[RMDB]
RNA sequence: GGGAACGACUCGAGUAGAGUCGAAAAGCGGGUAACUUCGGUUACCCGCAAAGACGCGUCUCGUCGCGUCGCCGUCGCGUCGCGGCGCGUCCCGUCGCGAGAAAAGGACGAAGUUCGCUUCGUCCAAGUCAAUUUAACGGUUCGCCGUUAAAUUGACAAAAGAAACAACAACAACAAC
Reactivity to 2A3 in 0.01 (KOAc 150mM, MgCl2 10mM, bicine 150mM(pH8.5), 24C), signal-to-noise 1, nucleotides 027 to 126: g000c010g000g010g000u010a020a000c010u020u110c190g030g000u030u000a010c000c000c000g030c000a000a000a000g010a000c000g010c000g000u000c010u000c030g000u010c010g000c000g020u030c020g020c060c100g170u080c070g040c010g030u040c020g010c000g010g030c020g030c000g000u000c000c000c000g110u080c040g030c040g010a130g040a120a120a050a030g000g000a000c000g000a000a000g010u000u190c200g030c080u000u020c000g000u000c000c000a000a000
Reactivity to DMS in 0.01 (KOAc 150mM, MgCl2 10mM, bicine 150mM(pH8.5), 24C), signal-to-noise 2, nucleotides 027 to 126: g060c000g130g000g020u000a000a000c010u000u020c160g030g000u000u000a000c000c000c000g020c010a010a010a060g000a030c010g000c110g000u000c040u000c020g000u000c000g010c060g010u020c080g020c080c130g000u010c030g000c010g010u010c030g000c040g010g000c020g000c040g010u000c010c020c000g000u000c090g010c090g010a150g000a090a080a120a100g000g010a020c000g020a020a000g030u000u010c220g040c010u000u000c000g010u010c010c000a020a030